[RMDB]
RNA sequence: GGGAACGACUCGAGUAGAGUCGAAAAUGAAGAAGCGAUAUUACCAAUUUUUGACCAAAUUUUCACGAGAAUUGGUGCAGCGGAUGAUCUAAUUGCCGGUCAAAGUACAUUCAUGGUAGAAAUGUUAGCACUAUUAUCCAUUCGUGGAUAAUAGUGCAAAAGAAACAACAACAACAAC
Reactivity to DMS in 0.01 (KOAc 150mM, MgCl2 10mM, bicine 150mM(pH8.5), 24C), signal-to-noise 3, nucleotides 027 to 126: u010g010a080a070g000a160a160g020c080g010a080u000a070u020u010a060c010c010a060a040u000u020u000u000u010g020a170c120c130a080a050a140u000u000u000u010c110a160c050g010a050g010a020a030u000u000g000g010u000g010c180a150g000c050g010g010a110u000g000a060u000c070u000a040a070u000u010g020c080c030g010g030u000c020a030a050a070g010u000a040c060a060u000u000c040a080u010g010g020u010a070g000a040a060a030u000g010u010u010a130
Reactivity to 2A3 in 0.01 (KOAc 150mM, MgCl2 10mM, bicine 150mM(pH8.5), 24C), signal-to-noise 2, nucleotides 027 to 126: u150g020a020a090g020a090a000g020c030g050a040u040a060u160u190a040c010c000a010a000u020u020u020u040u110g080a070c030c020a060a090a070u130u180u130u200c090a050c080g020a020g020a020a030u020u020g010g000u050g000c010a000g010c020g030g020a020u040g030a010u000c030u060a100a070u160u050g050c020c010g000g000u040c000a040a080a020g020u000a030c010a030u020u090c020a000u080g050g060u060a040g100a060a070a040u120g050u110u080a020